[RMDB]
RNA sequence: GGGAACGACUCGAGUAGAGUCGAAAACAAGAACUCCCACACAGGCUGCUGGCUAUGAGGACACAGGAAAGACUUCAUUCUUAGUGUAAACACUUUUCAGAUAUUGACUGAGCACCUGGUGGGAUAGAUGCUGCAACAACAACUUCAUCACCUGGACCUGUUGGAUCGGAUUCGUCCGAUCCAACAGAAAAGAAACAACAACAACAAC
Reactivity to 2A3 in 0.01 (KOAc 150mM, MgCl2 10mM, bicine 150mM(pH8.5), 24C), signal-to-noise 1, nucleotides 027 to 156: c040a000a030g050a220a100c050u000c000c050c000a010c040a000c000a000g030g020c120u010g000c000u020g100g020c040u080a070u140g020a040g050g050a000c000a000c020a060g100g000a030a050a000g060a120c010u120u000c040a060u010u000c030u010u020a070g020u000g010u050a130a210a040c030a110c080u170u130u040u090c020a040g040a070u080a150u250u080g080a180c000u050g110a000g050c000a000c030c000u040g000g000u000g000g000g000a000u000a000g000a010u100g000c030u010g040c010a040a000c000a120a000c000a050a110c070u080u060c010a040u050c000a030c040c030u000g020g030a010c010
An RNA of 207 nucleotides, treated with 2A3 and read out base by base. For 2A3 the reverse transcriptase was SuperScript II with manganese. Conditions: 150 mM KOAc, 10 mM MgCl2 and 150 mM bicine (pH 8.5), 24 C.